This 177-nucleotide RNA was probed chemically with DMS and 2A3. The reactions ran in a buffer of 150 mM KOAc, 10 mM MgCl2 and 150 mM bicine (pH 8.5), at 24 C. For DMS, 3,216 sequencing reads were counted. Values cover nucleotides 27 to 126.

[RMDB]
RNA sequence: GGGAACGACUCGAGUAGAGUCGAAAAAAGCUGAUGACAGGUGAAGAUAAGUUCUUCAAUUAUUUCUGCUGGAGAAGUGAGUAUUCAGAUGGAGAACUAAUUGACUGGGAAUGCAGCUCAAGAUAUGAUGGAAAUUACGAUUCGUCGUAAUUUCCAUAAAAGAAACAACAACAACAAC
Reactivity to DMS in 0.01 (KOAc 150mM, MgCl2 10mM, bicine 150mM(pH8.5), 24C), signal-to-noise 4, nucleotides 027 to 126: a120a020g000c010u010g010a080u000g010a240c030a040g020g010u010g010a070a160g000a070u010a090a050g010u000u000c000u000u000c000a030a100u010u000a090u010u010u010c120u010g010c050u000g010g010a080g000a130a170g010u010g020a080g000u000a110u010u000c070a030g010a130u000g000g000a020g000a010a010c020u000a060a050u000u000g000a110c030u000g000g000g010a100a070u010g020c010a020g000c010u000c110a080a100g000a150u010a080u010g000
Reactivity to 2A3 in 0.01 (KOAc 150mM, MgCl2 10mM, bicine 150mM(pH8.5), 24C), signal-to-noise 2, nucleotides 027 to 126: a030a000g000c010u000g020a030u060g010a010c000a020g110g080u070g130a040a010g010a120u050a120a000g010u010u010c000u010u020c030a050a070u090u050a110u060u200u090c060u090g030c030u040g040g040a080g030a090a020g180u280g190a010g020u060a080u070u110c030a040g050a120u070g040g000a030g000a000a000c000u000a020a070u080u020g050a050c030u000g000g000g110a080a050u230g030c000a000g010c030u050c050a020a020g070a190u080a130u300g110